[RMDB]
RNA sequence: GGGAACGACUCGAGUAGAGUCGAAAACAUGGAUCGUUCGCGAUCCAUGGCAGGUGGUGGUGGGACCAGCCGACCCAGGCUUAUGGCAUCCCAGCCUUUCCAAUCCAGCCUAUUUCGAUAGGCUGAACAGUUUGCAGAUAUUCGUAUCUGCAAACUGAAAAGAAACAACAACAACAAC
Reactivity to DMS in 0.01 (KOAc 150mM, MgCl2 10mM, bicine 150mM(pH8.5), 24C), signal-to-noise 4, nucleotides 027 to 126: c010a000u000g000g000a010u010c010g010u000u010c250g030c010g000a000u000c000c000a000u000g000g000c160a080g000g020u000g020g020u000g000g020u010g020g000g000a110c050c030a050g020c000c010g000a100c100c070c120a220g010g010c020u010u000a120u000g010g010c080a090u010c010c020c000a140g010c040c010u000u000u000c020c030a110a140u010c140c010a000g020c010c000u000a020u000u010u010c170g000a020u000a010g000g020c000u000g010a030a110
Reactivity to 2A3 in 0.01 (KOAc 150mM, MgCl2 10mM, bicine 150mM(pH8.5), 24C), signal-to-noise 3, nucleotides 027 to 126: c000a000u000g000g000a010u000c020g010u120u080c270g000c010g140a000u030c000c000a000u000g000g050c090a050g050g090u110g090g020u060g010g230u090g010g040g010a030c000c020a020g000c020c000g090a180c040c020c040a030g020g000c020u140u170a070u240g010g000c030a050u020c000c000c010a000g040c030c000u020u050u010c000c010a020a030u050c040c010a010g020c010c010u010a010u000u080u040c050g050a020u010a000g000g000c000u000g000a020a000
The data come from the RNA Mapping Database (RMDB), library M2PK50. The record gives the reactivity of an RNA of 177 nucleotides to DMS and 2A3. For DMS, 4,072 sequencing reads were counted. The 2A3 profile rests on 3,849 reads.